[RMDB]
RNA sequence: GGGAACGACUCGAGUAGAGUCGAAAAACUCGGUCGGUACGCCGACCGAGAACUCCUCAGAUCAGAAGGUGAUUGUGGCUUUGGGUAGCUACUAAGCAGCCACAACACUGCCUGGUCAGAAAGAGAACUUGUUACGCCCAUUCGUGGGCGUAACAAGAAAAGAAACAACAACAACAAC
Reactivity to 2A3 in 0.01 (KOAc 150mM, MgCl2 10mM, bicine 150mM(pH8.5), 24C), signal-to-noise 2, nucleotides 027 to 126: a000c000u000c000g000g000u000c020g000g020u020a010c240g050c040c000g000a000c000c000g000a020g000a000a000c020u010c000c000u000c060a060g000a030u000c000a000g050a110a100g000g010u020g040a300u020u000g000u000g030g010c050u080u050u150g090g080g110u210a080g090c060u200a060c020u070a180a000g030c040a000g000c030c000a000c000a000a000c000a000c000u040g000c000c000u000g020g000u000c020a000g120a000a110a000g080a030g020a030a090
Reactivity to DMS in 0.01 (KOAc 150mM, MgCl2 10mM, bicine 150mM(pH8.5), 24C), signal-to-noise 1, nucleotides 027 to 126: a100c000u000c000g000g050u000c010g040g140u000a000c300g020c010c000g000a000c010c000g000a000g000a000a010c070u000c000c060u000c180a210g000a020u000c000a000g000a130a270g000g010u000g000a180u000u000g040u000g010g020c000u000u000u040g020g000g050u010a150g010c120u020a060c000u000a090a030g040c140a090g000c000c000a000c050a000a000c020a000c000u000g000c300c000u000g030g020u000c000a000g000a080a000a070g000a040g040a090a220

Chemical mapping of a 177-nucleotide RNA with 2A3 and DMS. Source: RMDB library RFM100, as collected in RNAgym.